The data come from the RNA Mapping Database (RMDB), library OK3TST. The record gives the reactivity of an RNA of 207 nucleotides to DMS and 2A3. The DMS profile rests on 6,505 reads. DMS adducts were read by reverse transcription with MarathonRT. Values cover nucleotides 27 to 156. Conditions: 150 mM KOAc, 10 mM MgCl2 and 150 mM bicine (pH 8.5), 24 C.
RNA sequence: GGGAACGACUCGAGUAGAGUCGAAAAUGGCACAAUUCCACGGAAUCUGCAUGUGCUCUAAACUGUGAACGAAAAGCAGAAGGUUGUAGGGCAACCAGAAAAUAGCAAAUACAAUAGCUACCGCCAAAAUAAUAUUCAGAGAGGUCAGGCGAUAACGUGAUAGAGUAAUCUUCGGAUUACUCUAUCAAAAAGAAACAACAACAACAAC
Reactivity to DMS in 0.01 (KOAc 150mM, MgCl2 10mM, bicine 150mM(pH8.5), 24C), signal-to-noise 3, nucleotides 027 to 156: u000g000g040c030a060c030a080a150u000u000c020c020a150c090g040g000a100a120u000c040u000g000c040a130u000g030u010g020c030u010c060u000a050a090a130c020u000g030u000g030a070a130c080g000a070a100a130a300g020c030a070g020a170a150g000g030u000u000g040u000a070g000g000g030c040a040a060c050c020a160g010a060a030a070a090u000a080g020c020a070a090a100u010a070c080a080a100u000a100g020c010u000a020c010c020g010c010c030a030a050a070a120u000a030a070u000a090u000u010c040a150g020a160g010a060g020g030u000c020a100g000g010c000g000a050u000a040a040c040g000
Reactivity to 2A3 in 0.01 (KOAc 150mM, MgCl2 10mM, bicine 150mM(pH8.5), 24C), signal-to-noise 4, nucleotides 027 to 156: u050g020g000c050a020c010a060a060u090u000c010c020a030c050g020g010a060a060u030c010u050g020c070a070u150g000u020g050c000u000c040u060a080a080a060c030u030g050u040g170a080a070c100g060a060a080a060a040g000c010a020g000a100a030g070g020u050u040g080u090a030g000g040g000c010a020a010c020c010a040g100a020a020a030a020u080a010g010c020a020a070a050u140a120c050a020a180u010a090g010c000u030a030c020c050g030c010c030a000a100a010a000u160a040a020u050a060u070u110c040a010g040a000g000a010g120g010u040c020a030g030g000c010g060a050u040a110a030c070g010